[RMDB]
RNA sequence: GGGAACGACUCGAGUAGAGUCGAAAAAGGCAUCGACGGUGUCGAAGCAAUGGCGUAGACCUCAGGCACCGAGUAUGUGUAUCGGAGCGAGCUUGGCUAGACAGAGCCAGAGAAGUGGGUCGAAGUGCAUGAGUAGAAUCUUCGGAUUCUACUCAUGAAAAGAAACAACAACAACAAC
Reactivity to 2A3 in 0.01 (KOAc 150mM, MgCl2 10mM, bicine 150mM(pH8.5), 24C), signal-to-noise 4, nucleotides 027 to 126: a010g100g000c010a010u020c040g130a110c070g130g040u070g000u000c010g020a010a000g000c050a030a110u300g080g020c050g110u100a020g040a140c000c000u030c050a000g050g000c000a010c000c010g010a020g030u160a090u160g160u050g050u080a090u110c010g020g000a020g020c030g000a010g050c060u070u080g000g000c010u030a010g040a090c060a030g130a000g060c000c010a020g020a010g020a180a050g070u190g020g030g000u020c030g020a080a010g070u070g050
Reactivity to DMS in 0.01 (KOAc 150mM, MgCl2 10mM, bicine 150mM(pH8.5), 24C), signal-to-noise 6, nucleotides 027 to 126: a080g010g020c020a030u000c020g020a120c040g020g010u010g020u000c000g000a110a080g010c030a110a060u010g000g010c040g010u000a170g000a120c040c000u000c050a110g010g000c000a040c000c000g000a050g030u000a060u010g020u000g010u010a060u000c030g000g000a090g000c050g000a090g010c050u000u000g020g000c020u000a080g020a120c260a080g010a080g010c020c010a040g000a090g000a080a090g020u010g010g000g010u000c050g030a080a160g010u010g010
Notes:
Structure probing data (2A3 and DMS) for a 177-nucleotide construct. The RNA was probed in 150 mM KOAc, 10 mM MgCl2 and 150 mM bicine (pH 8.5) at 24 C. It was measured as part of the RMDB library VIROID.